[RMDB]
RNA sequence: GGGAACGACUCGAGUAGAGUCGAAAAUACGGCCAUCCGAAACGUACGGAGGACACAAGUCGCAUACCUCGCUGAGUGCGUACGGAAACCAUCCAAUUCAGGCAUGCGAAAGGAUGGCGAUCCUCCUCAUCAGUGUCGCGUACUCUCAUCACAUCAACAAAAAUGUAAGAUUCGUCUUACAUUUUUGAAAAGAAACAACAACAACAAC
Reactivity to 2A3 in 0.01 (KOAc 150mM, MgCl2 10mM, bicine 150mM(pH8.5), 24C), signal-to-noise 7, nucleotides 027 to 156: u160a020c050g040g000c010c000a030u030c030c030g060a090a080a080c030g020u090a020c050g010g050a050g070g030a020c020a010c010a090a060g040u020c000g000c040a010u040a140c030c030u100c060g080c130u120g040a050g100u080g010c000g050u060a020c040g010g010a050a030a010c030c000a010u000c010c000a030a050u130u130c040a040g120g040c070a050u080g020c020g030a060a020a010g010g010a000u010g010g000c010g000a000u010c000c010u020c010c000u080c030a140u040c030a050g040u030g020u050c040g010c010g090u040a080c020u020c040u040c040a120u130c070a070c020a140u200c040a050a130
Reactivity to DMS in 0.01 (KOAc 150mM, MgCl2 10mM, bicine 150mM(pH8.5), 24C), signal-to-noise 3, nucleotides 027 to 156: u000a060c060g000g000c000c010a070u050c020c000g000a080a100a060c070g010u010a090c080g030g000a120g020g000a050c060a100c040a070a140g020u000c010g060c020a050u000a040c050c020u010c060g000c090u000g010a140g030u000g030c070g000u000a180c030g030g000a140a200a070c050c020a030u000c000c000a050a230u000u000c040a030g030g010c040a050u000g010c060g010a060a110a230g010g030a040u000g020g000c000g010a050u000c050c010u000c040c020u000c040a100u000c050a100g010u000g010u000c000g000c020g040u000a030c070u000c040u000c050a110u010c070a050c090a080u000c070a030a220